[RMDB]
RNA sequence: GGGAACGACUCGAGUAGAGUCGAAAAUUGUGGUCAAGACCUUGGCGUAGUAUCCAAGGUUGUCAAGGUUCCUAUUGACUUAACAAUGAUUGAGUUUAAGUUAUGGUGUAAGGAUGGACAGGGGAAAAGAUUACCGACUGUUCGCAGUCGGUAAUCUAAAAGAAACAACAACAACAAC
Reactivity to DMS in 0.01 (KOAc 150mM, MgCl2 10mM, bicine 150mM(pH8.5), 24C), signal-to-noise 2, nucleotides 027 to 126: u000u010g010u000g000g030u000c100a080a120g000a000c000c000u000u000g000g010c230g010u000a180g010u000a120u000c030c010a010a020g000g010u000u000g000u000c060a060a090g000g000u000u000c050c020u000a120u000u000g000a010c000u000u000a050a020c020a090a110u010g010a160u000u000g000a120g010u010u000u010a020a070g000u000u000a070u000g020g020u000g020u010a070a030g010g000a060u000g000g010a030c090a100g010g000g010g010a090a070a040